RNA sequence: GGGAACGACUCGAGUAGAGUCGAAAAGGGCACCCACAAUAGGAUGGCAGGAGGGGACUGCGGGUCCGUCGUUCCAUCCUUUUCUUACCUUGUGGCCGGCAUGGCCCCAGCCUCCUCGCUGGCGCCGCAUAGGGGAUUGGUUCGCCAAUCCCCUAUGAAAAGAAACAACAACAACAAC
Reactivity to 2A3 in 0.01 (KOAc 150mM, MgCl2 10mM, bicine 150mM(pH8.5), 24C), signal-to-noise 1, nucleotides 027 to 126: g030g020g030c060a080c000c040c020a040c020a000a070u110a100g080g020a090u060g060g100c000a010g010g030a000g040g030g020g000a020c000u010g020c120g020g000g010u020c020c000g020u020c000g020u170u000c010c000a090u130c090c000u140u080u040u040c030u050u070a060c020c020u040u090g000u020g030g000c010c010g010g000c030a080u130g030g000c000c000c000c000a000g000c010c000u000c000c000u000c000g040c030u040g020g040c010g000c010c000g070
Reactivity to DMS in 0.01 (KOAc 150mM, MgCl2 10mM, bicine 150mM(pH8.5), 24C), signal-to-noise 2, nucleotides 027 to 126: g000g010g040c080a190c030c000c020a110c210a110a080u000a070g010g000a060u010g020g010c060a020g010g000a010g000g020g010g010a020c010u010g010c170g010g000g010u000c010c300g040u000c020g010u000u010c000c000a040u000c070c050u000u000u000u010c090u000u010a060c070c070u000u000g030u010g000g020c300c020g000g010c030a030u020g010g000c000c020c000c010a020g000c020c020u000c000c010u000c050g010c010u000g020g000c080g000c000c000g000